[RMDB]
An RNA of 177 nucleotides, treated with 2A3 and DMS and read out base by base. Conditions: 150 mM KOAc, 10 mM MgCl2 and 150 mM bicine (pH 8.5), 24 C. DMS adducts were read by reverse transcription with MarathonRT. For 2A3 the reverse transcriptase was SuperScript II with manganese. Source: RMDB library OK1LIB, as collected in RNAgym.
RNA sequence: GGGAACGACUCGAGUAGAGUCGAAAAGACGGAAAUCGAUGAACAUCGCUCCGAGGUGGGGACAAUCUUCGUCGAACACAAACGUAUCGUUGGUCGGAGCCGUGUACAGUCCCCAGCGGUCUUCGACGGUGGAUCAUCAUUUCGAUGAUGAUCCACCAAAAGAAACAACAACAACAAC
Reactivity to 2A3 in 0.01 (KOAc 150mM, MgCl2 10mM, bicine 150mM(pH8.5), 24C), signal-to-noise 3, nucleotides 027 to 126: g050a000c030g060g000a000a130a030u110c020g050a030u070g050a050a030c000a100u110c060g040c010u020c020c000g030a110g060g110u210g010g030g000g040a010c060a060a090u040c060u110u080c050g050u020c000g050a170a010c080a010c090a140a200a070c080g050u050a030u200c170g060u100u030g060g000u000c000g000g000a000g000c000c000g000u050g030u040a080c090a070g060u000c000c000c000c000a000g000c010g000g000u070c020u040u000c000g000a000c010
Reactivity to DMS in 0.01 (KOAc 150mM, MgCl2 10mM, bicine 150mM(pH8.5), 24C), signal-to-noise 1, nucleotides 027 to 126: g010a090c060g000g040a050a110a000u040c010g040a010u000g030a070a020c060a080u010c120g010c130u000c000c000g000a110g000g030u030g020g000g010g000a010c030a110a090u010c160u000u000c020g000u000c020g020a100a060c100a090c170a000a040a070c120g010u020a040u000c060g010u030u000g030g000u000c000g010g000a000g000c000c000g030u000g010u010a080c210a040g000u010c010c000c000c030a040g000c000g010g010u020c000u000u000c000g000a020c000